Conditions: 150 mM KOAc, 10 mM MgCl2 and 150 mM bicine (pH 8.5), 24 C. The record gives the reactivity of an RNA of 177 nucleotides to 2A3 and DMS. 2A3 adducts were read by reverse transcription with SuperScript II with manganese. Values cover nucleotides 27 to 126. The data come from the RNA Mapping Database (RMDB), library M2PK90.
RNA sequence: GGGAACGACUCGAGUAGAGUCGAAAAACAAAGCAUGGCUAGAAGAUGCCACCGCGGAUAGAGCUGAGGUACUGUAGACUUCUAGCCAGAAGAAUUCCCAAACCGCGGAGAGUGCUCUCGCAAAAAAGUAUAUCGCUUAGUUCGCUAAGCGAUAUACAAAAGAAACAACAACAACAAC
Reactivity to 2A3 in 0.01 (KOAc 150mM, MgCl2 10mM, bicine 150mM(pH8.5), 24C), signal-to-noise 2, nucleotides 027 to 126: a000c070a050a110a000g120c060a100u040g020g020c000u000a000g000a020a000g010a040u130g040c020c020a010c010c000g010c020g010g030a120u180a240g180a080g050c080u070g020a020g000g020u050a050c050u120g060u120a090g050a270c000u020u020c010u000a000g010c020c000a000g000a010a000g000a000a040u040u010c010c010c000a000a030a010c020c030g020c000g040g010a020g010a000g080u110g020c010u000c010u030c100g000c000a110a060a030a000a000a000
Reactivity to DMS in 0.01 (KOAc 150mM, MgCl2 10mM, bicine 150mM(pH8.5), 24C), signal-to-noise 2, nucleotides 027 to 126: a090c100a100a060a160g000c080a210u000g010g000c010u000a000g010a010a020g000a130u000g010c060c300a100c010c000g010c000g030g000a200u000a120g010a120g000c020u000g030a030g010g020u000a030c140u000g000u010a010g000a100c010u000u000c000u000a000g000c010c000a000g000a090a160g000a080a150u000u000c000c000c010a080a090a120c180c090g000c010g010g010a080g000a180g010u000g000c040u000c000u000c060g020c080a000a020a060a050a020a060